[RMDB]
RNA sequence: GGGAACGACUCGAGUAGAGUCGAAAAGCGUACUACCUCCCUGAGAGCCUUGGAUUUAUAAUCUCUAGCGUGAGAGCUCCCAAAUAGGAGCUCUUCGGGUUAUUGUCAGGCUCGAGAUGAGGGAGGUAUCGCAAAGAUCACGCUUCGGCGUGAUCAACUCACUAAAAGCGUUCGCGCUUUUAGUGAGAAAAGAAACAACAACAACAAC
Reactivity to 2A3 in 0.01 (KOAc 150mM, MgCl2 10mM, bicine 150mM(pH8.5), 24C), signal-to-noise 2, nucleotides 027 to 156: g010c020g010u100a110c040u020a030c030c030u050c000c010c010u080g060a140g000a010g070c060c000u200u170g160g000a080u300u300u050a040u120a060a050u040c080u010c120u210a090g140c050g110u150g090a000g000a000g000c000u010c000c010c040a120a260a010u300a140g000g000a000g000c000u010c000u000u000c000g000g000g010u000u000a010u000u000g000u030c020a020g020g000c000u000c000g020a030g010a080u300g060a080g000g000g000a010g030g010u020a000u000c000g010c000a000a000a120g000a000u010c000a000c010g000c020u040u130c220g100g000c000g000u000g010a000u000c000a000a000